RNA sequence: GGGAACGACUCGAGUAGAGUCGAAAACUUUUCUUGAUUUGAGGACAUCAUGUUUUAGUGUCGCUGCACUUACAACUGGUUUGACUUUUCAAACUGUGCGGCCUGGCAAUUUUAACCAAGACUUCUACGGUUAAUAGUACUUCGGUACUAUUAACCGAAAAGAAACAACAACAACAAC
Reactivity to 2A3 in 0.01 (KOAc 150mM, MgCl2 10mM, bicine 150mM(pH8.5), 24C), signal-to-noise 2, nucleotides 027 to 126: c010u080u130u070u090c040u090u150g080a150u090u040u150g030a030g020g000a010c000a060u110c030a060u140g070u030u040u030u040a070g010u020g000u000c020g000c010u020g030c010a000c020u140u210a070c080a170a110c080u070g060g000u000u020u020g030a020c000u050u150u170u140c020a000a030a000c020u010g000u000g010c000g000g030c000c020u010g000g000c000a030a040u040u070u040u030a070a020c030c010a080a050g050a110c030u080u030c010u050a020
Reactivity to DMS in 0.01 (KOAc 150mM, MgCl2 10mM, bicine 150mM(pH8.5), 24C), signal-to-noise 1, nucleotides 027 to 126: c080u010u010u000u000c020u000u010g010a080u010u000u010g030a080g020g010a080c110a080u000c060a070u000g010u000u010u000u000a070g030u010g000u020c040g000c020u010g010c010a030c010u010u000a080c210a090a100c210u010g000g000u000u000u000g000a110c300u000u000u000u030c010a030a010a030c050u000g000u000g010c010g040g020c020c130u010g000g000c030a070a040u000u000u000u010a060a130c030c040a080a070g020a030c230u000u010c010u010a220
This 177-nucleotide RNA was probed chemically with 2A3 and DMS.
For DMS, 745 sequencing reads were counted.
Reactivities are given for positions 27 through 126.